[RMDB]
RNA sequence: GGGAACGACUCGAGUAGAGUCGAAAAGGAUAGUUUCGACUAUCCAAAAAAGCGUACUACAACAAGGUAGGCUAGCCGAGGAUCUACAUCCCAAAUAGGAUGUAGGGAGGCUAGCUACCAAAGUUGUAUCGCAAAAAUCAGGUCUUCGGACCUGAAAGUUCAUAACCGACUUCGGUCGGUUAUGAACAAAAGAAACAACAACAACAAC
Reactivity to 2A3 in 0.01 (KOAc 150mM, MgCl2 10mM, bicine 150mM(pH8.5), 24C), signal-to-noise 1, nucleotides 027 to 156: g000g000a010u000a000g010u030u170u280c190g030a000c010u030a010u070c030c000a080a000a060a000a000a000g080c060g020u160a110c130u010a000c000a010a000c000a000a100g090g000u020a040g120g300c010u000a000g000c000c000g000a300g020g020a000u010c000u000a000c030a000u050c030c000c010a130a300a100u300a140g000g000a000u000g000u000a000g000g000g000a050g000g000c000u010a000g000c000u000a000c000c000a010a010a010g000u000u000g000u000a010u180c000g030c000a300a000a000a000a000u050c030a000g010g000u030c000u000u120c140g170g000a000c000c000u020g010a010a000a010